[RMDB]
RNA sequence: GGGAACGACUCGAGUAGAGUCGAAAAGAUAUGGAUUGAGUGUACCUUCAACAGCAAUACGAAGGCGAUAUGAUCGGAAACGAUCAUAUCGCCUUCGUAUUGACAUGAAGACACCAAUCCUAAGUCAGUCAUAUAAAUCGUUCGCGAUUUAUAUGACAAAAGAAACAACAACAACAAC
Reactivity to DMS in 0.01 (KOAc 150mM, MgCl2 10mM, bicine 150mM(pH8.5), 24C), signal-to-noise 2, nucleotides 027 to 126: g000a040u010a300u000g010g000a020u000u000g010a140g030u000g000u010a080c300c010u040u010c000a040a160c300a250g000c010a000a000u000a010c000g040a030a010g010g000c000g010a000u010a000u000g000a010u000c000g030g010a130a080a190c010g010a000u000c000a010u000a000u000c000g030c000c000u010u000c000g000u000a000u000u000g010a010c090a160u000g000a020a000g010a050c000a010c010c010a010a000u000c000c000u000a010a080g010u010c050a110